[RMDB]
RNA sequence: GGGAACGACUCGAGUAGAGUCGAAAAAGUCCGAUAUGCCCGGAACGUGCUUCCCAUUGGUGCACGGUCACGUGCUCACGUUCUGCUGUAGGUGACGGAUGUACCGGCAGGCCGCCUCCACGGUGGUAAUUCCCGAUAGAUUCGUCUAUCGGGAAUUAAAAGAAACAACAACAACAAC
Reactivity to 2A3 in 0.01 (KOAc 150mM, MgCl2 10mM, bicine 150mM(pH8.5), 24C), signal-to-noise 4, nucleotides 027 to 126: a000g020u000c000c000g020a110u050a110u300g050c060c020c000g000g000a040a010c010g030u040g020c060u070u070c000c010c020a060u040u300g080g020u050g010c010a000c020g130g050u270c150a040c240g050u030g000c010u010c010a020c030g040u050u040c020u060g100c060u130g090u230a060g010g090u030g030a020c020g000g040a050u080g060u070a020c010c030g040g020c020a030g080g000c010c000g020c000c020u130c130c070a120c120g050g020u040g010g000u010
Reactivity to DMS in 0.01 (KOAc 150mM, MgCl2 10mM, bicine 150mM(pH8.5), 24C), signal-to-noise 5, nucleotides 027 to 126: a120g010u000c020c010g030a160u000a080u000g010c030c040c030g010g000a040a030c030g010u000g010c250u000u000c020c010c020a200u000u000g020g000u000g010c000a010c000g000g010u010c280a100c020g030u010g000c010u010c030a040c070g020u000u000c040u010g010c270u010g010u010a090g010g010u000g010a080c030g000g000a060u010g010u000a060c030c010g000g000c100a080g000g000c010c010g020c020c010u010c090c110a110c160g010g010u000g010g010u000

Structure probing data (2A3 and DMS) for a 177-nucleotide construct. For 2A3, 4,184 sequencing reads were counted. Reactivities are given for positions 27 through 126. For DMS the reverse transcriptase was MarathonRT. The RNA was probed in 150 mM KOAc, 10 mM MgCl2 and 150 mM bicine (pH 8.5) at 24 C.